[RMDB]
RNA sequence: GGGAACGACUCGAGUAGAGUCGAAAAACCGGAGGCCGACAAUCCAGGGAACUGGAUGUCAUCACGUUGUUGCAGUACCAGAUGGCAUCUUAAAUCCGAUCUGCAAAUAAGCAUGUAGAAAGCUGAUAAAAUCACACACACUUCGGUGUGUGUGAAAGUUGUUUUACAUGUUCGCAUGUAAAACAACAAAAGAAACAACAACAACAAC
Reactivity to DMS in 0.01 (KOAc 150mM, MgCl2 10mM, bicine 150mM(pH8.5), 24C), signal-to-noise 2, nucleotides 027 to 156: a180c010c000g010g020a140g010g000c090c040g030a070c050a090a120u000c050c030a060g010g010g040a120a200c100u030g020g030a010u020g010u000c010a120u000c100a240c150g040u000u030g020u010u010g000c020a070g000u000a050c040c050a140g040a040u000g010g000c030a050u000c010u000u020a010a140a120u000c020c010g010a110u010c080u000g040c020a050a050a090u010a100a080g000c050a070u000g040u000a140g030a060a060a150g000c050u000g000a090u010a040a030a110a150u020c000a000c000a000c000a030c000a020c010u000u010c300g040g010u000g020u000g030u000g010u000g010a020a010a050
Reactivity to 2A3 in 0.01 (KOAc 150mM, MgCl2 10mM, bicine 150mM(pH8.5), 24C), signal-to-noise 2, nucleotides 027 to 156: a000c010c000g040g030a040g030g070c060c040g020a050c040a080a120u000c020c000a050g000g050g000a070a090c050u030g000g000a000u000g000u010c000a010u030c030a000c110g040u060u060g020u000u070g030c070a060g030u100a070c030c040a020g000a060u010g010g000c020a020u040c000u070u140a090a120a020u020c010c030g060a080u010c010u030g030c010a010a000a080u120a090a020g000c060a070u070g000u060a020g100a150a090a000g040c030u010g060a020u150a060a140a030a050u000c000a000c000a000c000a000c000a000c010u030u050c130g050g000u000g000u000g000u010g000u000g000a000a000a000
Chemical mapping of a 207-nucleotide RNA with DMS and 2A3. The reactions ran in a buffer of 150 mM KOAc, 10 mM MgCl2 and 150 mM bicine (pH 8.5), at 24 C. In probing experiments dimethyl sulfate is read out at A N1 and C N3, which are open when not base-paired. The 2A3 profile rests on 1,530 reads.